[RMDB]
RNA sequence: GGGAACGACUCGAGUAGAGUCGAAAAGAUAUGGAAUAAUCUGGUACCCUCGAAGAACGUGCCUCGGAAACGAGGCACGGGAGAGGACCAGAGUUAUUCCUAAGUCAAAGGCAUGUUCGCAUGCCAACUUUACUUAUGUGUUCGCACAUAAGUAAAGAAAAGAAACAACAACAACAAC
Reactivity to DMS in 0.01 (KOAc 150mM, MgCl2 10mM, bicine 150mM(pH8.5), 24C), signal-to-noise 6, nucleotides 027 to 126: g010a060u010a300u010g000g010a030a000u000a010a040u000c000u000g000g000u000a170c300c010c000u000c010g020a190a170g020a160a200c010g010u000g010c000c000u000c000g010g000a130a080a170c000g010a020g010g030c000a000c000g000g000g010a050g000a030g000g010a040c000c010a010g010a040g010u000u000a020u000u000c010c010u000a030a110g010u000c060a100a140a140g000g010c010a010u000g000u000u000c160g010c010a010u000g010c000c010a040a060
Reactivity to 2A3 in 0.01 (KOAc 150mM, MgCl2 10mM, bicine 150mM(pH8.5), 24C), signal-to-noise 2, nucleotides 027 to 126: g040a020u130a050u200g000g010a010a020u020a020a030u020c000u020g020g120u240a300c070c010c000u010c010g240a300a050g000a080a000c000g000u000g010c000c000u020c020g010g040a070a090a060c020g000a020g000g000c000a000c000g000g000g000a030g010a020g010g010a010c000c000a000g020a010g010u000u000a010u010u000c000c000u020a140a030g060u020c060a140a080a050g000g000c000a000u020g020u090u190c300g020c130a000u000g000c000c000a010a000
An RNA of 177 nucleotides, treated with DMS and 2A3 and read out base by base. For 2A3 the reverse transcriptase was SuperScript II with manganese. Reactivities are given for positions 27 through 126. The reactions ran in a buffer of 150 mM KOAc, 10 mM MgCl2 and 150 mM bicine (pH 8.5), at 24 C. Reactivities are rounded to 0.1 and cut off at 0 and 3. High 2A3 reactivity points to a flexible backbone, as in loops and unpaired stretches. It was measured as part of the RMDB library TTRDES.